[RMDB]
RNA sequence: GGGAACGACUCGAGUAGAGUCGAAAAGAUAUGGACAUUGUAGGGAGAUCGUGUGUCGGAAACGACACGAUCGACGAUCUACGGGUGUCCUAAGUCAAAGACGUUCAAGCUUCGGCUUGAACGUCAACAGUUAAUGUUCCUUCGGGAACAUUAACUGAAAAGAAACAACAACAACAAC
Reactivity to DMS in 0.01 (KOAc 150mM, MgCl2 10mM, bicine 150mM(pH8.5), 24C), signal-to-noise 5, nucleotides 027 to 126: g010a020u000a170u020g000g000a020c010a050u010u010g000u000a000g000g020g000a040g010a010u000c000g020u000g010u000g040u010c010g000g000a050a050a100c000g030a120c000a010c000g000a010u000c010g000a110c260g000a080u010c000u000a000c000g020g010g040u000g000u000c000c000u000a010a090g000u000c020a110a130a130g010a010c000g020u000u000c000a020a010g020c000u000u020c270g030g000c000u000u000g000a000a000c000g010u000c000a010a060
Reactivity to 2A3 in 0.01 (KOAc 150mM, MgCl2 10mM, bicine 150mM(pH8.5), 24C), signal-to-noise 3, nucleotides 027 to 126: g020a000u050a020u120g000g010a000c010a020u110u160g000u030a020g010g050g050a050g010a020u010c010g010u070g030u070g240u180c010g000g020a060a020a000c010g000a000c000a010c000g000a010u000c010g050a070c020g020a020u020c010u000a020c060g160g080g080u050g000u010c000c000u010a090a010g020u010c070a140a080a130g010a000c000g000u010u000c010a000a000g000c010u090u300c300g110g010c000u000u030g000a010a000c020g000u000c000a000a000